Chemical mapping of a 177-nucleotide RNA with DMS and 2A3. The 2A3 profile rests on 1,900 reads. The reactions ran in a buffer of 150 mM KOAc, 10 mM MgCl2 and 150 mM bicine (pH 8.5), at 24 C. DMS adducts were read by reverse transcription with MarathonRT.
[RMDB]
RNA sequence: GGGAACGACUCGAGUAGAGUCGAAAAGAUUCGGCGGCCCUGUCAUGAGGCCGAAACGAAGGCACGUACCCCUUCGAAUGGCGUCGGGGAGUCAGCGGCUAUAUAUGCGCCUAAUGCUGGCAUCCGGGGUAGAUACGUUUUUCGAAACGUAUCUACCAAAAGAAACAACAACAACAAC
Reactivity to DMS in 0.01 (KOAc 150mM, MgCl2 10mM, bicine 150mM(pH8.5), 24C), signal-to-noise 5, nucleotides 027 to 126: g000a140u000u000c040g000g030c050g020g000c000c010c030u010g010u010c090a050u030g000a090g010g020c000c010g000a030a040a050c040g010a050a030g000g000c180a090c100g020u030a130c120c060c000c020u000u010c010g000a090a040u000g010g000c030g020u030c030g000g020g000g020a080g010u000c010a010g010c020g000g010c010u020a150u050a110u040a090u030g020c120g000c060c080u010a060a090u040g020c000u000g000g010c020a030u010c010c030g000g010
Reactivity to 2A3 in 0.01 (KOAc 150mM, MgCl2 10mM, bicine 150mM(pH8.5), 24C), signal-to-noise 2, nucleotides 027 to 126: g020a070u080u080c050g090g000c010g030g030c050c000c010u030g070u050c050a030u050g030a030g040g000c000c000g030a000a010a000c000g010a010a000g040g010c080a000c120g160u170a090c010c000c000c000u000u000c020g050a050a050u050g030g000c010g070u080c000g030g040g020g020a110g020u010c000a000g010c010g070g000c060u010a010u000a010u010a020u300g110c090g000c020c020u100a190a070u260g010c000u000g030g010c020a010u000c010c000g070g010